This 177-nucleotide RNA was probed chemically with DMS and 2A3. Values are in units of 0.01, from 0 to 300, in steps of 10.
[RMDB]
RNA sequence: GGGAACGACUCGAGUAGAGUCGAAAAAUGCAUGGUAGGCACUGGCCCAGAAGGCUGCCACAGAAACACUGUGACUCAUGGGCCCUGUUCCUGUGUCCCAGGCUCAGGGAUAAAUUUGGUUACAGACUUGGUCAAUAAAGUUCGCUUUAUUGACCAAAAAAGAAACAACAACAACAAC
Reactivity to DMS in 0.01 (KOAc 150mM, MgCl2 10mM, bicine 150mM(pH8.5), 24C), signal-to-noise 6, nucleotides 027 to 126: a060u020g010c050a080u000g000g000u000a040g000g010c010a060c090u020g010g000c020c010c010a120g000a150a110g010g010c040u010g000c000c010a090c240a060g010a140a100a090c210a150c000u000g000u000g000a020c010u000c220a050u020g010g020g000c000c000c030u000g000u000u000c020c000u010g000u030g000u010c230c060c010a070g000g000c040u000c010a030g000g010g010a040u010a020a070a120u000u010u010g000g020u010u000a040c020a030g000a170c180
Reactivity to 2A3 in 0.01 (KOAc 150mM, MgCl2 10mM, bicine 150mM(pH8.5), 24C), signal-to-noise 3, nucleotides 027 to 126: a000u140g040c080a050u030g050g000u040a070g160g010c060a040c200u060g070g000c010c000c000a030g120a030a010g060g000c000u020g050c020c000a020c020a050g120a010a110a010c100a040c060u010g000u020g010a010c000u110c200a030u060g020g110g050c000c000c000u010g000u020u000c000c000u000g060u090g000u070c080c000c000a000g020g000c000u000c000a000g000g010g010a040u200a080a160a090u110u110u100g000g000u010u010a030c010a020g020a000c060